[RMDB]
RNA sequence: GGGAACGACUCGAGUAGAGUCGAAAAUUAAUCAAGAUGCAGUAUGAUUCCAUGGAAAGUGAAAUGAGGGAAUAUGUGGUUGGUGGAACUUUAACGCACAAUACUUUUAGUUCUUUAAUGAAAAUGCACCAGGAUGAAUUUUCGAAUUCAUCCUGGUAAAAGAAACAACAACAACAAC
Reactivity to 2A3 in 0.01 (KOAc 150mM, MgCl2 10mM, bicine 150mM(pH8.5), 24C), signal-to-noise 4, nucleotides 027 to 126: u080u070a020a050u080c060a050a000g050a070u110g040c060a030g000u130a010u070g060a040u150u000c050c000a050u070g080g020a060a070a030g060u090g090a090a090a060u160g000a110g060g030g030a020a080u060a060u200g050u050g000g030u090u000g050g040u030g010g000a000a000c010u000u050u080a090a000c030g090c020a030c010a070a110u060a210c020u020u130u070u120a050g020u020u050c040u070u110u140a130a160u200g110a060a080a020a060u140g060c070
Reactivity to DMS in 0.01 (KOAc 150mM, MgCl2 10mM, bicine 150mM(pH8.5), 24C), signal-to-noise 3, nucleotides 027 to 126: u010u030a060a070u030c050a070a070g000a060u020g000c050a050g020u000a030u010g000a110u000u030c080c060a090u020g000g030a050a080a030g010u000g010a040a040a050u020g000a030g000g010g000a050a030u020a050u010g040u010g000g000u000u000g010g000u000g030g000a060a030c020u000u010u000a060a090c130g010c140a070c130a120a050u020a080c150u000u020u010u000a050g000u010u000c000u000u010u020a080a080u040g000a050a050a120a060u010g010c170
This 177-nucleotide RNA was probed chemically with 2A3 and DMS. For 2A3, 2,069 sequencing reads were counted. Conditions: 150 mM KOAc, 10 mM MgCl2 and 150 mM bicine (pH 8.5), 24 C. For DMS the reverse transcriptase was MarathonRT. Values are in units of 0.01, from 0 to 300, in steps of 10.